Source: RMDB library OK3TST, as collected in RNAgym. Structure probing data (DMS and 2A3) for a 207-nucleotide construct. Reactivities are given for positions 27 through 156. The reactions ran in a buffer of 150 mM KOAc, 10 mM MgCl2 and 150 mM bicine (pH 8.5), at 24 C. 2A3 adducts were read by reverse transcription with SuperScript II with manganese. The DMS profile rests on 2,675 reads.
[RMDB]
RNA sequence: GGGAACGACUCGAGUAGAGUCGAAAAGACGUGGAGGUAUCGCGCCCUCCUUUGCGCGUAAGUACGUCGAAAUUCGGUGCUAUGGAUCGCACCGUCUGAUCCAUUAGAUAUCCGCUCUGUGCCGCGGUUGGGCAUUUACACUUACCCGAAAGGGGAAAAAUGAUAGCCUGUUCGCAGGCUAUCAUUUAAAAGAAACAACAACAACAAC
Reactivity to DMS in 0.01 (KOAc 150mM, MgCl2 10mM, bicine 150mM(pH8.5), 24C), signal-to-noise 1, nucleotides 027 to 156: g010a000c070g080u000g020g010a110g040g000u030a080u030c070g000c000g010c080c100c020u000c020c040u000u000u000g020c020g000c000g020u000a140a170g000u000a050c020g000u000c030g030a060a100a210u000u000c000g020g030u000g000c010u000a210u000g010g000a120u020c080g000c050a300c120c120g000u010c070u000g020a050u000c000c050a080u010u000a060g010a170u000a070u000c040c030g030c130u020c040u000g030u000g010c000c030g000c030g010g020u020u000g000g040g010c000a060u010u000u130a100c030a020c080u000u010a170c000c010c010g010a060a060a180g010g000g030g000a010a060
Reactivity to 2A3 in 0.01 (KOAc 150mM, MgCl2 10mM, bicine 150mM(pH8.5), 24C), signal-to-noise 1, nucleotides 027 to 156: g060a020c030g000u060g020g130a030g000g100u180a040u170c010g050c000g000c000c060c000u120c030c070u050u100u080g010c010g000c010g030u030a030a030g040u060a050c010g030u010c010g060a150a010a040u080u060c020g000g030u020g080c030u060a040u120g060g040a000u060c040g000c060a080c140c000g000u030c020u020g010a010u000c000c010a040u090u110a030g040a040u110a050u070c010c010g000c020u000c030u060g100u000g030c000c000g040c010g060g040u080u120g020g000g000c000a000u050u040u060a010c070a010c050u090u070a050c020c000c000g030a070a040a060g050g020g020g140a180a120